Structure probing data (2A3 and DMS) for a 177-nucleotide construct. Reactivities are given for positions 27 through 126. 2A3 adducts were read by reverse transcription with SuperScript II with manganese. For DMS the reverse transcriptase was MarathonRT. Conditions: 150 mM KOAc, 10 mM MgCl2 and 150 mM bicine (pH 8.5), 24 C. For DMS, 1,362 sequencing reads were counted.
RNA sequence: GGGAACGACUCGAGUAGAGUCGAAAAGCAAGAAGAAGGGAAACCGCCGUUCAGGUCAUGGUGUUGGACUCGUCACUUUGGCCUUUAUAGGCACGGUGAUGGCUGCAACUAGCGUUACAAAGGACAACCACCGUACACAGUUCGCUGUGUACGGUGGAAAAGAAACAACAACAACAAC
Reactivity to 2A3 in 0.01 (KOAc 150mM, MgCl2 10mM, bicine 150mM(pH8.5), 24C), signal-to-noise 1, nucleotides 027 to 126: g010c020a030a090g180a040a040g040a020a090g070g020g060a030a000a100c000c060g000c010c020g100u080u140c020a030g010g080u000c050a040u050g060g020u080g040u080u030g020g060a020c010u000c030g000u040c010a000c030u220u100u190g010g010c000c000u020u110u050a300u160a050g010g000c000a000c030g000g000u030g040a090u000g020g000c000u010g030c040a070a040c070u070a000g060c040g060u050u030a050c030a020a090a000g030g040a000c000a040a040
Reactivity to DMS in 0.01 (KOAc 150mM, MgCl2 10mM, bicine 150mM(pH8.5), 24C), signal-to-noise 2, nucleotides 027 to 126: g050c150a020a090g000a040a040g010a140a060g010g010g000a030a080a080c050c030g010c010c020g000u000u000c070a090g030g000u000c060a090u000g000g000u000g020u000u010g010g010a040c050u000c050g010u000c000a030c020u000u000u000g000g010c030c000u000u040u000a060u020a070g000g030c020a020c190g000g000u000g000a010u000g020g050c120u010g010c050a020a040c050u000a030g020c030g020u000u000a050c110a040a040a090g000g000a080c170a110a170